[RMDB]
Source information:
The record gives the reactivity of an RNA of 207 nucleotides to 2A3. Source: RMDB library RNAMAK, as collected in RNAgym. Conditions: 150 mM KOAc, 10 mM MgCl2 and 150 mM bicine (pH 8.5), 24 C. 2A3 adducts were read by reverse transcription with SuperScript II with manganese.
RNA sequence: GGGAACGACUCGAGUAGAGUCGAAAAGGGGUCUCUAGACAAGUCCCAUGUUGUCAGCUGACUACACUGAAGCCUCCACGGUGUAGCAGCUUGGAUUUACAUGGGUCACCCUAGAGACGGAGGCACCCAAACAUCAUCGUGUUCGCACGAUGAUGAAUCGAGGACAGAAGUUCGCUUCUGUCCUCGAAAAAGAAACAACAACAACAAC
Reactivity to 2A3 in 0.01 (KOAc 150mM, MgCl2 10mM, bicine 150mM(pH8.5), 24C), signal-to-noise 1, nucleotides 027 to 156: g080g000g010g020u020c010u000c050u030a000g010a070c060a190a110g030u030c000c000c000a000u000g040u060u000g190u130c280a100g000c050u000g210a300c020u040a000c010a010c010u020g080a090a040g020c000c000u000c020c000a010c000g000g000u000g000u000a000g010c000a000g000c000u020u100g210g000a010u010u180u180a000c000a000u000g000g000g000u090c020a100c010c000c050u020a020g000a000g020a000c010g020g000a000g010g050c020a030c040c010c000a080a050a050c020a000u020c000a000u000c000g000u000g030u030u090c180g040c050a000c000g000a000u010g000a000u000g020a010a040